[RMDB]
RNA sequence: GGGAACGACUCGAGUAGAGUCGAAAAUAAAAUCGUAGGGCGAGACGAUCGACGUAAAUCGCUCAAACUAGUCGAGACCAAAGGAAUACGCUUCGGUAACUCGCUCUAAUCCCGAGCGAUAAAUGAAAGCCUAGAUAUCUUUCGAGAUAUCUAGGCUAAAAGAAACAACAACAACAAC
Reactivity to DMS in 0.01 (KOAc 150mM, MgCl2 10mM, bicine 150mM(pH8.5), 24C), signal-to-noise 2, nucleotides 027 to 126: u010a030a080a080a060u000c070g030u000a000g010g000g020c000g010a010g000a080c090g000a050u000c030g020a070c040g010u000a030a070a070u010c000g000c020u010c040a080a110a120c230u000a060g000u000c050g010a040g010a110c090c040a020a080a120g010g000a180a150u000a040c090g000c130u000u010c020g000g000u050a090a060c020u000c000g020c000u010c010u000a040a090u000c010c020c010g000a050g010c000g000a060u000a030a060a050u000g000a080a080
Reactivity to 2A3 in 0.01 (KOAc 150mM, MgCl2 10mM, bicine 150mM(pH8.5), 24C), signal-to-noise 1, nucleotides 027 to 126: u070a000a040a030a020u110c030g020u040a020g000g020g000c030g000a000g020a050c090g020a040u010c020g000a000c000g010u060a000a000a150u060c010g000c000u000c050a050a070a060c070u040a020g130u070c020g000a010g030a080c040c020a030a130a040g040g050a160a110u080a080c080g010c100u040u050c030g000g000u020a080a080c000u020c000g000c000u000c000u000a030a040u060c010c000c000g010a010g000c000g030a030u070a050a120a060u150g090a190a090

This 177-nucleotide RNA was probed chemically with DMS and 2A3. The RNA was probed in 150 mM KOAc, 10 mM MgCl2 and 150 mM bicine (pH 8.5) at 24 C. Source: RMDB library M2PK90, as collected in RNAgym. DMS adducts were read by reverse transcription with MarathonRT.